[RMDB]
An RNA of 177 nucleotides, treated with DMS and read out base by base. The DMS profile rests on 2,246 reads. It was measured as part of the RMDB library TTRINS.

RNA sequence: GGGAACGACUCGAGUAGAGUCGAAAAGAUAUGGAUUGAACUACAGAGAAGGUAGGCGUUGAAACUAUGGGAAGAUCGGAAACGAUCUUCCCAUAGUGGAGCCUACCGGAUCUGCAAUCCUAAGUCAGAUAAAUAUUAUCUUCGGAUAAUAUUUAUCAAAAGAAACAACAACAACAAC
Reactivity to DMS in 0.01 (KOAc 150mM, MgCl2 10mM, bicine 150mM(pH8.5), 24C), signal-to-noise 3, nucleotides 027 to 126: g000a040u000a300u000g020g010a050u010u010g000a070a100c150u010a300c000a020g000a020g010a300a240g010g020u000a000g010g000c010g020u000u020g000a140a130a010c000u000a000u010g000g000g000a030a010g000a010u010c000g010g010a120a080a250c000g000a010u000c000u000u010c000c000c000a020u000a000g000u000g000g000a110g000c010c000u000a000c000c000g010g000a190u000c010u010g000c000a000a000u000c010c010u000a040a150g000u000c050a150
The reactions ran in a buffer of 150 mM KOAc, 10 mM MgCl2 and 150 mM bicine (pH 8.5), at 24 C. DMS adducts were read by reverse transcription with MarathonRT.